[RMDB]
RNA sequence: GGGAACGACUCGAGUAGAGUCGAAAACAGUGAGACUUCGGUCUCACUGAAAUGACUAUGCAGCAUGACGAGGACGAAGAUGCGGAGGACGACGAGGAACAAAAACAGCAAGGUUCGCCUUGCUGAAGUAAACACAGAGGUUCGCCUCUGUGUUUACAAAAGAAACAACAACAACAAC
Reactivity to 2A3 in 0.01 (KOAc 150mM, MgCl2 10mM, bicine 150mM(pH8.5), 24C), signal-to-noise 2, nucleotides 027 to 126: c010a000g000u010g000a000g010a000c000u040u120c260g110g010u000c000u000c010a010c000u010g000a000a000a010u110g000a000c020u040a050u230g050c050a020g000c010a050u070g050a050c050g020a030g030g000a010c050g050a050a060g020a050u080g040c020g010g040a020g010g020a030c040g000a010c010g030a040g050g030a010a060c080a030a110a030a000a040c000a000g000c010a000a010g030g010u040u080c170g080c040c000u010u010g000c010u000g000a010a000
Reactivity to DMS in 0.01 (KOAc 150mM, MgCl2 10mM, bicine 150mM(pH8.5), 24C), signal-to-noise 4, nucleotides 027 to 126: c000a020g000u010g000a000g010a010c000u000u010c190g030g010u000c000u000c000a000c000u000g000a040a070a070u000g010a080c030u010a070u000g000c040a060g020c040a040u000g000a100c080g010a080g010g000a090c100g000a060a060g010a070u000g020c060g000g010a050g000g000a080c070g010a060c060g020a050g000g000a050a050c140a050a060a070a090a120c010a010g010c010a010a000g000g010u000u010c200g020c000c000u000u000g000c000u000g000a010a070